[RMDB]
RNA sequence: GGGAACGACUCGAGUAGAGUCGAAAAGUGGCCAAGGUGACAGCUGCACGCCCGGAGCCAAGCGCGGCGUGGGCUGAAGCCCGGCGGCGGGUACGCCAACGCCGCGAGGACAUGCUGCGCCAUCCUGCUGGUCUUUCACUUUCGAGUGAAAGACCAGAAAAGAAACAACAACAACAAC
Reactivity to DMS in 0.01 (KOAc 150mM, MgCl2 10mM, bicine 150mM(pH8.5), 24C), signal-to-noise 1, nucleotides 027 to 126: g010u010g000g000c000c090a110a060g000g010u000g000a200c070a080g000c000u020g000c110a170c000g000c060c020c000g020g000a160g000c050c170a090a120g000c050g070c000g010g000c010g070u000g000g000g020c000u010g000a180a180g100c000c000c000g000g000c300g000g030c030g000g000g000u000a280c130g000c000c000a080a030c060g000c000c000g020c070g020a000g030g120a160c030a110u120g070c190u000g000c030g070c020c030a170u000c000c000u000g010
Reactivity to 2A3 in 0.01 (KOAc 150mM, MgCl2 10mM, bicine 150mM(pH8.5), 24C), signal-to-noise 1, nucleotides 027 to 126: g110u050g050g050c080c010a110a010g000g000u000g000a030c020a030g050c040u110g010c080a010c040g030c010c000c020g030g050a090g030c030c060a080a000g040c000g010c060g010g000c000g000u050g000g040g060c000u030g020a060a020g000c000c000c000g060g000c030g050g160c010g000g000g000u040a030c080g000c000c010a000a000c010g000c000c000g020c000g000a010g000g000a010c020a030u070g010c020u000g000c000g050c000c000a040u040c010c010u020g070
Notes:
Chemical mapping of a 177-nucleotide RNA with DMS and 2A3. For DMS, 1,038 sequencing reads were counted.